Source: RMDB library OK3TST, as collected in RNAgym.
This 207-nucleotide RNA was probed chemically with DMS and 2A3.
The reactions ran in a buffer of 150 mM KOAc, 10 mM MgCl2 and 150 mM bicine (pH 8.5), at 24 C.

RNA sequence: GGGAACGACUCGAGUAGAGUCGAAAAAUGAACACCAAAACCAUCGCCGACACCAUCAAGAUCGCACAAGUUAAGCCGCACAUCGUAUCGCGCCACCUGAUUAACCUUUCUCGCCUGUGCAUGGCCGACUACGUGGCGAAGCCUUUAGAGAAUGGCCCUAAUAGGCUCAAUUCGUUGAGCCUAUUAGAAAAGAAACAACAACAACAAC
Reactivity to DMS in 0.01 (KOAc 150mM, MgCl2 10mM, bicine 150mM(pH8.5), 24C), signal-to-noise 3, nucleotides 027 to 156: a070u010g000a090a080c030a290c050c020a050a090a090a130c010c030a090u000c030g020c030c010g000a120c020a070c040c020a070u000c050a070a070g000a090u000c030g000c070a070c090a080a090g010u010u000a060a090g020c010c020g020c020a100c010a040u000c040g030u010a120u000c060g020c020g040c010c010a050c040c020u000g010a110u020u000a060a060c070c030u010u000u000c040u000c020g040c050c020u000g000u010g000c060a080u000g030g000c000c010g020a100c060u000a060c070g010u010g010g030c030g010a070a160g020c030c020u010u000u010a130g010a110g010a060a060u010g010g020c020c150
Reactivity to 2A3 in 0.01 (KOAc 150mM, MgCl2 10mM, bicine 150mM(pH8.5), 24C), signal-to-noise 5, nucleotides 027 to 156: a000u160g020a040a020c030a030c050c010a010a010a000a060c030c010a050u060c070g010c030c010g040a020c030a020c040c020a020u080c060a060a040g030a090u070c060g000c030a040c010a080a080g010u080u090a080a020g060c020c010g060c030a060c000a080u110c040g060u070a050u100c050g010c000g000c070c010a030c010c020u070g010a120u060u130a050a070c020c020u050u110u040c060u040c040g050c010c020u040g030u060g030c040a050u110g030g000c020c000g000a030c030u120a040c060g070u060g010g010c010g020a030a000g040c010c000u080u130u130a100g000a000g040a090a060u120g020g000c000c000